[RMDB]
RNA sequence: GGGAACGACUCGAGUAGAGUCGAAAAAUACACCAGCAGUAGGACUCAGCGACCGUCACAACAAGGUUGUGCUGGUAUCCGACGGUCGUAUGGCCCUGUCUUGCAGGUUGCCUUGCACUGACGUGCCACACCAUUUACAGAUUCGUCUGUAAAUGAACCGAUACGUACUCUUCGGAGUACGUAUCGGAAAAGAAACAACAACAACAAC
Reactivity to 2A3 in 0.01 (KOAc 150mM, MgCl2 10mM, bicine 150mM(pH8.5), 24C), signal-to-noise 1, nucleotides 027 to 156: a000u100a010c110a020c000c000a010g000c000a000g000u190a000g030g030a030c050u100c130a020g000c010g000a000c030c000g000u050c030a030c050a070a040c010a100a160g100g030u040u020g060u150g060c030u030g040g000u000a100u000c030c070g010a000c000g000g000u010c000g000u030a100u050g050g000c000c000c010u050g040u030c060u090u110g000c010a000g010g040u100u140g070c040c000u020u040g000c020a030c120u160g070a050c060g020u050g020c020c020a090c000a040c070c000a000u000u000u000a000c000a000g020a010u000u060c180g040u010c050u020g020u000a000a000a000u020g000a020a070